[RMDB]
RNA sequence: GGGAACGACUCGAGUAGAGUCGAAAAUCCUAAGUCCGAAUGACAUGUUGCGGCAACUAAAUCUUCCCAUCGGAAACGAUGGGAUAUAAGUCGGUUGCGCAACAACAGCAUUCGGAUAUGGAAAACUGAUGCUCACACUUCGGUGUGAGCAUCAGAACUAACGUCAUAGGUUCGCCUAUGACGUUAGAAAAGAAACAACAACAACAAC
Reactivity to DMS in 0.01 (KOAc 150mM, MgCl2 10mM, bicine 150mM(pH8.5), 24C), signal-to-noise 1, nucleotides 027 to 156: u000c000c010u000a080a140g000u000c000c010g060a030a000u010g000a110c050a300u000g030u000u000g010c000g070g020c000a020a030c010u000a000a070a100u010c060u000u000c010c010c000a000u000c000g030g020a250a120a300c030g000a010u000g000g030g030a000u000a000u000a060a090g030u010c190g020g010u000u000g010c000g070c010a070a010c010a000a010c080a080g000c000a010u010u000c010g000g040a010u000a010u000g020g000a080a030a140a230c000u000g000a030u010g010c000u000c030a000c030a010c040u000u010c300g020g040u010g020u000g000a000g000c000a000u000c000a000g010a060a210
Reactivity to 2A3 in 0.01 (KOAc 150mM, MgCl2 10mM, bicine 150mM(pH8.5), 24C), signal-to-noise 3, nucleotides 027 to 156: u000c000c000u010a110a020g010u000c000c000g010a000a000u060g060a190c060a100u030g020u000u010g030c180g190g040c040a010a000c000u090a050a130a120u060c060u030u020c030c000c010a000u000c010g000g040a080a030a030c020g010a010u000g010g010g000a000u000a040u010a010a010g100u070c100g010g000u000u000g010c000g000c000a000a000c000a000a000c040a000g060c000a010u000u000c020g000g000a010u010a020u020g010g040a010a120a010a040c000u010g000a000u000g000c000u000c010a010c000a000c010u050u120c300g110g000u000g000u000g000a000g000c000a000u000c000a000g000a000a000
An RNA of 207 nucleotides, treated with DMS and 2A3 and read out base by base. DMS (dimethyl sulfate) methylates the pairing face of unpaired adenines and cytosines. Conditions: 150 mM KOAc, 10 mM MgCl2 and 150 mM bicine (pH 8.5), 24 C.